Conditions: 150 mM KOAc, 10 mM MgCl2 and 150 mM bicine (pH 8.5), 24 C. The record gives the reactivity of an RNA of 207 nucleotides to 2A3 and DMS. For 2A3, 3,552 sequencing reads were counted. Values cover nucleotides 27 to 156.
RNA sequence: GGGAACGACUCGAGUAGAGUCGAAAAACUACGAAUUCGUUCGUAGUAAAAAGAUAUGGAAAGUCACGUUGUCAGAUCUGAGAUCGGAAACGAUCUUAAAGAUCUUGGAUUUACGUGAGCUUUCCUAAGUCAAAAAAUCGCGUCUUCGGACGCGAAACGACAAAGAAGAGUUCGCUCUUCUUUGUCGAAAAGAAACAACAACAACAAC
Reactivity to 2A3 in 0.01 (KOAc 150mM, MgCl2 10mM, bicine 150mM(pH8.5), 24C), signal-to-noise 3, nucleotides 027 to 156: a010c000u010a000c010g000a020a020u090u110c230g060u080u010c010g000u030a010g000u020a010a010a030a000a000g040a030u070a030u090g000g000a010a000a000g020u030c000a000c000g010u020u020g020u070c040a010g000a010u000c000u020g040a020g000a060u000c010g010g000a040a020a020c000g000a000u010c010u020u080a240a170a010g010a000u000c000u000u080g070g000a020u200u190u140a000c000g000u020g020a030g010c000u000u000u000c000c000u010a040a000g020u020c040a000a000a000a030a000a250u050c010g000c000g000u010c000u030u010c220g110g000a000c000g000c000g000a000a000a010
Reactivity to DMS in 0.01 (KOAc 150mM, MgCl2 10mM, bicine 150mM(pH8.5), 24C), signal-to-noise 1, nucleotides 027 to 156: a030c010u010a000c000g000a030a030u000u000c300g050u010u010c000g040u000a000g000u000a010a060a120a050a080g010a060u010a260u000g010g000a010a000a010g000u000c000a000c000g000u000u020g010u030c050a070g000a020u000c000u000g000a030g010a020u010c000g040g000a170a100a190c010g010a020u000c010u000u010a050a080a040g010a000u030c010u000u000g010g050a030u000u030u020a000c000g010u000g000a110g010c020u000u000u010c000c060u020a020a040g020u000c040a000a100a110a090a100a120u000c010g030c010g010u000c020u010u040c260g000g030a030c010g020c000g010a000a020a050